RNA sequence: GGGAACGACUCGAGUAGAGUCGAAAAGGUGUUACGUAGUGGUACCCACGAGAAAUCAAGUAUAUGGGCUAUGGGGAUAGUACGAUCGCAAGAUUGAAACUUGAAGAAAUUGACGGAAGGACACCACUAGGGAAAUGUGUUUCGACACAUUUCCCUAAAAAGAAACAACAACAACAAC
Reactivity to DMS in 0.01 (KOAc 150mM, MgCl2 10mM, bicine 150mM(pH8.5), 24C), signal-to-noise 2, nucleotides 027 to 126: g000g050u020g020u000u000a100c030g040u000a030g000u030g000g030u010a070c050c010c010a140c110g010a070g000a050a040a050u000c050a030a060g010u020a120u070a080u010g010g000g000c040u000a040u020g010g010g020g020a040u000a030g000u000a110c060g040a040u000c030g000c200a060a060g000a040u000u030g000a130a110a000c000u010u000g000a030a080g000a010a060a100u030u010g010a100c060g020g000a190a120g000g000a090c040a050c030c020a030c120
Reactivity to 2A3 in 0.01 (KOAc 150mM, MgCl2 10mM, bicine 150mM(pH8.5), 24C), signal-to-noise 1, nucleotides 027 to 126: g030g000u030g000u060u060a030c030g050u080a000g000u010g200g000u010a000c000c040c000a090c040g100a100g070a000a160a100u060c020a020a020g140u030a050u030a090u300g030g000g000c000u000a120u030g030g000g000g000a000u000a000g040u000a040c050g030a030u060c000g000c120a010a010g110a080u080u000g030a020a000a070c020u020u160g000a020a000g030a000a070a080u160u070g000a020c020g000g000a070a030g000g000a020c020a020c110c040a000c020
Chemical mapping of a 177-nucleotide RNA with DMS and 2A3.